RNA sequence: GGGAACGACUCGAGUAGAGUCGAAAAGAUAUGGAUUACUCGGGAGCUCAUUAUUCGGAAACGAAUAGGGAGCGACGAUCGAGGUAAUCCUAAGUCAAACAUCGGUCCAGUUCGCUGGACCGAUGAACGUAAUCGGGUAGUUCGCUACCCGAUUACGAAAAGAAACAACAACAACAAC
Reactivity to DMS in 0.01 (KOAc 150mM, MgCl2 10mM, bicine 150mM(pH8.5), 24C), signal-to-noise 1, nucleotides 027 to 126: g000a020u000a030u020g000g000a000u000u000a020c010u000c010g000g000g000a010g030c000u010c010a030u010u000a000u000u010c000g020g000a010a010a010c010g020a010a010u000a000g000g010g010a010g010c010g020a030c270g000a030u000c000g020a010g000g020u010a000a000u010c000c000u000a020a080g000u010c000a150a180a280c000a000u000c000g030g000u000c000c000a000g040u010u010c290g000c000u000g000g000a010c010c000g000a010u000g000a020a110
Conditions: 150 mM KOAc, 10 mM MgCl2 and 150 mM bicine (pH 8.5), 24 C. An RNA of 177 nucleotides, treated with DMS and read out base by base. Values cover nucleotides 27 to 126. For DMS, 1,535 sequencing reads were counted. It was measured as part of the RMDB library TTRDEL.